[RMDB]
RNA sequence: GGGAACGACUCGAGUAGAGUCGAAAACUGCAAAUGCGCUUUCAGCACCAGCUAACCAGUCAGCGCGCUUGGCAUCUUCCGCAGCAUAGUAAUCAUUUUGUGCCUUGAUCAUGUUCUGGAGUUUUUCAUCUCCUUCGCUGCCACCUGCAUUAAUAUACAAUAACCGCCAGUUCGCUGGCGGUUAUUGAAAAGAAACAACAACAACAAC
Reactivity to DMS in 0.01 (KOAc 150mM, MgCl2 10mM, bicine 150mM(pH8.5), 24C), signal-to-noise 1, nucleotides 027 to 156: c050u020g070c000a040a080a100u010g020c020g020c040u000u010u020c060a060g060c090a080c050c030a110g010c030u010a100a120c050c040a130g000u010c070a060g010c040g020c060g000c060u000u020g010g020c000a070u000c050u010u000c060c030g070c060a070g020c000a030u020a110g050u030a020a070u000c050a200u000u000u010u000g010u000g030c030c010u010u010g030a040u010c040a060u000g000u000u010c100u000g010g000a070g020u000u000u030u030u000c110a100u000c000u000c020c000u000u020c030g000c040u000g000c010c030a060c050c000u020g000c070a100u000u000a060a110u000a150u000a190
Reactivity to 2A3 in 0.01 (KOAc 150mM, MgCl2 10mM, bicine 150mM(pH8.5), 24C), signal-to-noise 5, nucleotides 027 to 156: c040u030g020c010a020a030a090u110g010c040g010c040u040u100u110c060a030g000c060a050c080c030a040g040c050u030a080a040c030c020a030g050u050c020a010g030c010g000c010g040c110u030u070g010g020c000a040u030c040u100u020c030c050g020c020a010g010c010a020u060a080g040u160a150a060u100c080a090u010u080u110u280g060u050g040c000c020u040u080g030a080u120c020a070u080g080u170u060c050u090g040g000a030g010u030u030u010u090u110c070a160u030c020u000c010c000u030u070c050g020c010u010g040c010c020a040c020c020u020g020c030a020u100u100a200a050u250a030u100a070
Conditions: 150 mM KOAc, 10 mM MgCl2 and 150 mM bicine (pH 8.5), 24 C. An RNA of 207 nucleotides, treated with DMS and 2A3 and read out base by base. Reactivities are given for positions 27 through 156. Source: RMDB library OK3TST, as collected in RNAgym.